[RMDB]
RNA sequence: GGGAACGACUCGAGUAGAGUCGAAAACAGCCACCGGGAUAGGACAGAGAAAUCACCUCCAGAGGACCCCUUCAGCGAACAUGAAGCGCACUGAGCCGCCAGGAUGAGUCCAUAGCGAUAGGAGGGGAACCCCGGCUAUUCGUAGCCGGGAAAAGAAACAACAACAACAAC
Reactivity to DMS in 0.01 (KOAc 150mM, MgCl2 10mM, bicine 150mM(pH8.5), 24C), signal-to-noise 4, nucleotides 027 to 129: c110a140g050c000c000a130c130c000g080g010g030a280u120a070g030g000a100c160a100g000a060g030a100a110a070u080c000a160c040c060u070c050c060a120g060a070g030g060a130c160c060c000c060u110u010c070a150g000c060g090a000a110c090a080u130g040a000a070g040c300g040c000a080c160u000g000a130g050c150c010g080c000c120a060g000g000a000u000g000a140g050u110c030c010a110u000a110g000c100g050a040u030a060g060g010a050g020g040g000g040a000a000c100
Reactivity to 2A3 in 0.01 (KOAc 150mM, MgCl2 10mM, bicine 150mM(pH8.5), 24C), signal-to-noise 7, nucleotides 027 to 129: c030a010g050c010c010a030c030c010g010g000g030a060u080a070g030g030a060c070a070g100a000g050a050a060a080u100c030a060c030c010u040c030c030a020g010a060g070g010a060c000c000c000c000u040u090c050a030g010c010g070a020a020c020a050u160g050a090a000g010c000g000c040a030c100u060g030a020g060c020c020g000c020c010a000g010g030a060u080g020a000g040u000c030c020a060u110a050g020c030g040a030u070a070g000g020a000g000g010g010g010a010a020c010